[RMDB]
RNA sequence: GGGAACGACUCGAGUAGAGUCGAAAAGUUUGGAAGAAUUCGAGUAAAAUUCUUAAAUCUUGUUUACUCGUGACUUAUAGUACAUUCAAGAGGAAUGACUCAUGUUUUGUUUAUUUACAUGAUGGCACUCCACAGUUAUUUUCGAAUAACUGUGGAGAAAAGAAACAACAACAACAAC
Reactivity to DMS in 0.01 (KOAc 150mM, MgCl2 10mM, bicine 150mM(pH8.5), 24C), signal-to-noise 4, nucleotides 027 to 126: g000u000u000u010g020g010a210a020g000a050a010u010u000c000g000a020g010u000a010a010a010a010u010u000c000u000u020a080a070a070u000c000u000u000g000u000u000u000a000c000u000c000g010u000g000a050c010u000u000a020u010a030g000u000a020c000a010u000u000c000a010a110g000a070g010g000a050a010u000g000a100c010u000c040a010u000g000u000u000u000u000g000u010u010u000a060u010u000u000a060c010a000u000g000a130u010g010g010c250a210
Reactivity to 2A3 in 0.01 (KOAc 150mM, MgCl2 10mM, bicine 150mM(pH8.5), 24C), signal-to-noise 3, nucleotides 027 to 126: g040u070u140u180g040g030a040a030g000a040a040u140u100c000g000a000g010u010a010a020a010a020u020u040c010u030u120a020a040a040u030c000u040u040g030u010u000u010a000c000u000c010g000u010g000a000c000u020u030a010u030a030g000u020a020c000a010u000u010c000a000a010g010a010g160g020a010a000u000g010a000c000u000c020a010u030g020u000u020u030u020g080u030u100u070a100u030u070u040a030c010a010u040g070a090u110g160g030c040a030